[RMDB]
The data come from the RNA Mapping Database (RMDB), library OK1LIB. Structure probing data (2A3 and DMS) for a 177-nucleotide construct. DMS adducts were read by reverse transcription with MarathonRT.
RNA sequence: GGGAACGACUCGAGUAGAGUCGAAAACAUUCACGUGAGAAACAGGCCUGCUACGAGAUGUCCUCCUUCAAGGAAAGCAAAGCCAAGAAUCUGGCGGAACAUUCAGCAACUGAAUUUAUCCAACACAAGACAGACUCUCUUUCGAGAGAGUCUGUCUAAAAGAAACAACAACAACAAC
Reactivity to 2A3 in 0.01 (KOAc 150mM, MgCl2 10mM, bicine 150mM(pH8.5), 24C), signal-to-noise 2, nucleotides 027 to 126: c030a030u160u190c080a040c160g020u090g090a070g070a050a190a000c000a000g000g020c030c000u000g010c030u050a100c050g010a050g010a080u070g070u030c030c000u000c000c080u070u060c010a060a050g030g010a080a030a060g120c130a080a000a000g000c010c000a000a030g050a030a120u060c110u030g070g000c020g010g000a020a000c000a000u030u040c100a000g090c060a090a060c090u000g010a060a030u070u070u060a050u020c010c010a080a030c070a070c050a130
Reactivity to DMS in 0.01 (KOAc 150mM, MgCl2 10mM, bicine 150mM(pH8.5), 24C), signal-to-noise 1, nucleotides 027 to 126: c030a010u000u020c080a090c070g000u000g000a100g000a130a210a060c010a300g020g060c000c010u100g000c000u000a060c130g000a000g000a080u000g000u080c060c000u000c000c120u000u000c210a030a160g070g000a060a220a040g000c120a000a120a150g020c030c030a030a080g010a070a300u060c070u000g000g000c180g000g100a130a070c150a150u000u000c070a020g000c090a060a000c070u000g060a060a000u000u000u160a090u100c000c000a030a220c180a100c090a030

For DMS, 707 sequencing reads were counted.